[RMDB]
RNA sequence: GGGAACGACUCGAGUAGAGUCGAAAACAGGUAGCCCAGACCUUCAAGGCUAUGGUGCGUUGCGACGCACGGUCUGAUUCUUCACAACGACGUUCACCGCGUCUUCUUCCAUCCCCCUGGGGCAGUGUAUAACCAGCAGCCUUCGGGCUGCUGGUAAGUUCUUUCAGAGUUUCGACUCUGAAAGAACAAAAGAAACAACAACAACAAC
Reactivity to DMS in 0.01 (KOAc 150mM, MgCl2 10mM, bicine 150mM(pH8.5), 24C), signal-to-noise 1, nucleotides 027 to 156: c030a060g030g000u000a060g030c030c000c090a080g000a070c020c030u000u030c100a080a090g000g020c010u000a040u010g060g070u000g020c000g030u000u010g000c100g010a090c040g030c010a030c060g010g000u000c020u010g010a150u000u010c060u000u000c060a090c040a090a140c060g000a070c040g020u000u000c040a140c070c120g000c030g000u030c030u010u000c030u000u000c000c080a110u010c020c010c060c010c020u000g000g020g040g030c070a060g010u010g010u000a120u000a070a080c010c000a030g000c000a030g010c000c000u000u000c300g120g040g040c000u000g000c000u010g000g010u000a000a040